[RMDB]
Structure probing data (DMS and 2A3) for a 177-nucleotide construct.
The DMS profile rests on 1,277 reads.
The RNA was probed in 150 mM KOAc, 10 mM MgCl2 and 150 mM bicine (pH 8.5) at 24 C.
For DMS the reverse transcriptase was MarathonRT.
Reactivities are rounded to 0.1 and cut off at 0 and 3.
High 2A3 reactivity points to a flexible backbone, as in loops and unpaired stretches.

RNA sequence: GGGAACGACUCGAGUAGAGUCGAAAAUGCCCUCUGCCCUCCAGCGAGAAGGCACUGCAGAGCAACCACUUUGAACUGAGCCUGCGCACUGAGGCCACGCAGGGGCUGGUGCUCUGGAGUGGCAAGGCUGGGGCUGAAUAUUCGUAUUCAGCCCCAGAAAAGAAACAACAACAACAAC
Reactivity to DMS in 0.01 (KOAc 150mM, MgCl2 10mM, bicine 150mM(pH8.5), 24C), signal-to-noise 2, nucleotides 027 to 126: u010g000c020c000c010u010c060u000g000c020c000c020u000c040c020a070g010c300g020a110g000a190a120g000g000c060a030c030u000g000c020a060g020a040g010c070a090a110c160c180a090c060u010u010u010g000a080a130c180u020g020a160g020c020c000u000g020c130g010c090a040c060u020g000a130g010g000c040c080a060c070g000c180a140g000g000g010g030c080u000g000g020u000g000c000u000c000u000g010g010a010g030u010g020g000c030a040a080g000g000
Reactivity to 2A3 in 0.01 (KOAc 150mM, MgCl2 10mM, bicine 150mM(pH8.5), 24C), signal-to-noise 1, nucleotides 027 to 126: u070g000c030c000c020u020c030u020g000c000c050c020u000c000c000a010g010c020g040a050g080a170a080g030g000c000a010c030u060g050c030a020g030a010g000c020a050a140c000c040a050c030u010u140u080g100a130a090c090u010g000a010g050c030c010u180g080c090g000c020a030c080u300g300a070g050g000c000c000a020c040g080c040a050g080g080g000g000c060u040g000g000u040g000c010u030c010u020g010g010a010g000u140g050g040c020a040a020g030g000